This 207-nucleotide RNA was probed chemically with 2A3. Values cover nucleotides 27 to 156. The RNA was probed in 150 mM KOAc, 10 mM MgCl2 and 150 mM bicine (pH 8.5) at 24 C.
RNA sequence: GGGAACGACUCGAGUAGAGUCGAAAAGCACCGACGAGAGUCGGUGCAGUCAGCGCGAGCUGACAAAGUGUACAACGUGACAGCUGCGGAAUGAACGCGUACACGACAGCCUGACAGAUCCUGGAGACAGGUAGUCAGGCAGUCAAAGCUGCAUGAAGCUCAAAAUGCUAUUCGUAGCAUUUUGAGCAAAAGAAACAACAACAACAAC
Reactivity to 2A3 in 0.01 (KOAc 150mM, MgCl2 10mM, bicine 150mM(pH8.5), 24C), signal-to-noise 2, nucleotides 027 to 156: g000c000a010c000c000g000a000c000g070a030g010a020g080u000c000g040g000u000g040c010a000g010u010c000a000g000c030g050c050g060a020g000c000u000g010a010c000a030a060a000g000u000g000u000a000c000a150a040c130g050u020g120a060c000a000g000c000u000g000c020g010g100a160a160u170g020a140a030c000g010c020g000u000a000c010a000c010g010a000c000a010g010c020c000u020g010a010c000a020g110a090u220c000c000u020g000g000a020g010a010c020a000g020g000u010a000g000u020c000a000g010g010c000a000g000u000c010a000a000a000g000c000u010g000c010a010u080g040a050a020
2A3 adducts were read by reverse transcription with SuperScript II with manganese. The data come from the RNA Mapping Database (RMDB), library OK3TST.